This 177-nucleotide RNA was probed chemically with 2A3 and DMS.
The reactions ran in a buffer of 150 mM KOAc, 10 mM MgCl2 and 150 mM bicine (pH 8.5), at 24 C.
For DMS the reverse transcriptase was MarathonRT.

RNA sequence: GGGAACGACUCGAGUAGAGUCGAAAAGCUGCCUCUGACGUCCUUCUCCCCCGGAAACGGGGCCGAAGGGUGGUAAAGCGAGUCGCCUGGCGCUCGCACGGGUAUGCGUGGGGGUCGACCCUGGCCGACUAUUAAUAUUAUUCGUAAUAUUAAUAGUAAAAGAAACAACAACAACAAC
Reactivity to 2A3 in 0.01 (KOAc 150mM, MgCl2 10mM, bicine 150mM(pH8.5), 24C), signal-to-noise 1, nucleotides 027 to 126: g020c010u010g020c000c010u110c090u100g130a030c000g020u020c000c020u010u000c010u050c000c000c000c000c000g000g010a010a000a000c010g000g000g000g000c010c000g020a000a020g000g010g030u030g000g080u120a060a040a020g010c020g000a000g100u230c010g020c070c210u100g120g010c020g010c030u000c020g000c000a000c040g100g000g010u090a060u300g010c010g020u130g000g030g010g010g030u110c010g040a120c000c000c010u000g080g050c010c010g030
Reactivity to DMS in 0.01 (KOAc 150mM, MgCl2 10mM, bicine 150mM(pH8.5), 24C), signal-to-noise 3, nucleotides 027 to 126: g010c040u010g000c020c010u000c130u010g030a140c040g010u010c010c000u010u000c010u010c300c010c000c000c000g010g000a090a060a170c010g020g000g010g030c030c060g000a010a020g010g010g020u000g010g020u010a060a120a160g000c010g030a010g030u020c040g020c020c100u010g020g020c010g010c000u000c010g020c010a040c090g000g020g020u010a030u020g010c010g000u000g000g010g010g010g020u000c060g000a150c040c010c040u000g010g000c030c040g010